[RMDB]
Chemical mapping of a 207-nucleotide RNA with 2A3.
RNA sequence: GGGAACGACUCGAGUAGAGUCGAAAAUAAUUGAUCUGUAGAAUCUGUCAAGCAAAACCCCAAAACCUUACACUGAGAUCAUUUAGCCUGAUUACUCUUUAAAUCAAAUCAGGCAAUAGAGAGAAACAAAAUCCGUGACUGUUCGCAGUCACGGAAACCUAAACUCGAAGUUCGCUUCGAGUUUAGGAAAAGAAACAACAACAACAAC
Reactivity to 2A3 in 0.01 (KOAc 150mM, MgCl2 10mM, bicine 150mM(pH8.5), 24C), signal-to-noise 1, nucleotides 027 to 156: u040a040a070u020u050g010a000u010c050u060g180u120a060g040a110a130u080c010u030g030u060c090a070a140g010c030a080a080a100a300c000c010c000c100a000a060a000a190c050c110u090u080a030c030a030c100u080g000a010g000a170u010c000a080u010u100u100a030g010c000c000u000g030a010u020u060a050c070u020c030u120u080u180a120a200a130u080c070a030a000a010u000c000a000g010g000c000a000a000u000a000g010a000g000a000g060a060a040a000c040a000a130a000a140u000c010c000g000u000g010a000c000u000g030u050u110c130g030c110a000g000u000c000a060c000g000g000a000a000a000